[RMDB]
RNA sequence: GGGAACGACUCGAGUAGAGUCGAAAAGUGGUCGUGGCGUUAGGUGACGACAAACCAGACCUGUCAACGCUGCGGGCGUUUAUCACCAACGGCGAACAGGGAGUGAAUUACCAUCGUAACGUCUGGCAGAUCGCUGACUUUUCGAAGUCAGCGAUCUAAAAGAAACAACAACAACAAC
Reactivity to DMS in 0.01 (KOAc 150mM, MgCl2 10mM, bicine 150mM(pH8.5), 24C), signal-to-noise 1, nucleotides 027 to 126: g040u010g010g020u000c000g080u000g010g040c000g030u000u000a060g020g020u000g020a120c090g000a080c100a050a130a120c090c050a080g020a150c010c030u000g000u010c020a090a060c000g000c000u000g000c300g000g000g010c010g040u000u010u010a080u010c040a060c000c000a020a060c040g010g000c000g020a120a000c030a010g000g010g000a140g000u000g000a060a110u000u000a110c020c000a020u000c000g000u000a030a050c040g010u000c000u000g000g010c180